[RMDB]
RNA sequence: GGGAACGACUCGAGUAGAGUCGAAAAUGGCACUGCUAGGCAAUCUGAUCAUGGAAGAUUUGGCUGCGGACUUUGAUUUAGACCCAAUCAAGGAACCAGAAGUUACCCACUAUGAUGCAAAUUGGGAACAAUGUAUCCAAUUCGUUGGAUACAUUGUAAAAGAAACAACAACAACAAC
Reactivity to 2A3 in 0.01 (KOAc 150mM, MgCl2 10mM, bicine 150mM(pH8.5), 24C), signal-to-noise 9, nucleotides 027 to 126: u050g050g000c040a020c100u060g020c060u080a030g070g010c020a010a040u020c020u060g050a050u070c040a070u130g090g030a070a050g020a110u090u070u130g060g000c000u020g020c050g020g020a030c000u050u030u050g020a020u030u050u100a090g040a100c000c020c000a000a010u020c020a020a020g040g010a050a080c010c000a030g040a110a020g070u050u100a080c010c020c020a010c020u080a110u190g120a050u100g050c040a060a050a140u110u080g030g010g000a010
Reactivity to DMS in 0.01 (KOAc 150mM, MgCl2 10mM, bicine 150mM(pH8.5), 24C), signal-to-noise 9, nucleotides 027 to 126: u000g010g010c080a080c060u000g020c050u000a090g010g010c040a060a050u000c030u000g000a090u010c080a050u000g010g010a100a050g010a070u000u000u000g010g010c030u000g010c140g010g010a200c020u000u000u000g000a040u000u000u010a100g010a170c040c020c050a100a040u000c030a020a040g010g000a080a110c040c020a060g000a080a070g010u000u000a110c050c020c020a100c130u000a050u000g010a070u010g010c090a030a050a090u000u000g000g010g000a150
The data come from the RNA Mapping Database (RMDB), library OK2TRN. An RNA of 177 nucleotides, treated with 2A3 and DMS and read out base by base. The reactions ran in a buffer of 150 mM KOAc, 10 mM MgCl2 and 150 mM bicine (pH 8.5), at 24 C. Reactivities are given for positions 27 through 126. The 2A3 profile rests on 20,422 reads.